[RMDB]
RNA sequence: GGGAACGACUCGAGUAGAGUCGAAAAGCGCAAUUCGUUGCGCAUAUCCUAAGUCAAAUUUAGCAACUAUAUUAAGGGAGGGAAAUCGGAAACGAUUUCCCGAAGAACUUAAUACGAAUUGCUAUCUUUGAUAUGGAGCGUUGGGCGUUCGCGCCCAUCAGACAACGGAAUUCGUUCCGUUGUCUGAAAAAGAAACAACAACAACAAC
Reactivity to DMS in 0.01 (KOAc 150mM, MgCl2 10mM, bicine 150mM(pH8.5), 24C), signal-to-noise 2, nucleotides 027 to 156: g020c010g030c010a040a070u000u000c170g030u000u020g010c020g020c030a110u020a020u000c020c010u000a060a290g020u010c010a020a000a030u000u000u000a020g060c010a010a040c050u010a150u010a010u010u000a010a050g000g000g000a220g030g010g060a010a000a010u010c010g000g000a130a190a300c000g010a000u000u000u000c000c000c000g000a060a070g000a180a300c000u000u000a000a010u000a010c040g010a070a040u010u000g000c010u000a010u000c020u000u000u000g000a040u010a270u000g030g010a060g000c180g000u000u010g000g000g040c010g070u000u000c240g040c060g000c000c000c000a000
Reactivity to 2A3 in 0.01 (KOAc 150mM, MgCl2 10mM, bicine 150mM(pH8.5), 24C), signal-to-noise 3, nucleotides 027 to 156: g000c000g010c000a030a040u150u080c230g110u160u040g000c000g000c010a010u100a020u060c010c000u050a200a030g020u010c000a000a000a000u000u000u010a000g000c000a000a020c060u040a020u010a010u110u000a000a000g000g020g000a020g000g000g000a000a010a010u000c000g010g030a100a040a060c000g000a000u000u000u010c000c010c010g000a010a000g000a000a000c000u000u000a000a000u010a020c060g140a290a300u020u000g000c010u000a000u000c000u000u020u000g000a010u010a070u130g040g040a060g030c120g090u170u090g010g000g000c030g030u070u110c240g040c000g030c130c010c000a000
About this RNA
Source: RMDB library RNAMAK, as collected in RNAgym. The record gives the reactivity of an RNA of 207 nucleotides to DMS and 2A3. The reactions ran in a buffer of 150 mM KOAc, 10 mM MgCl2 and 150 mM bicine (pH 8.5), at 24 C. 2A3 adducts were read by reverse transcription with SuperScript II with manganese.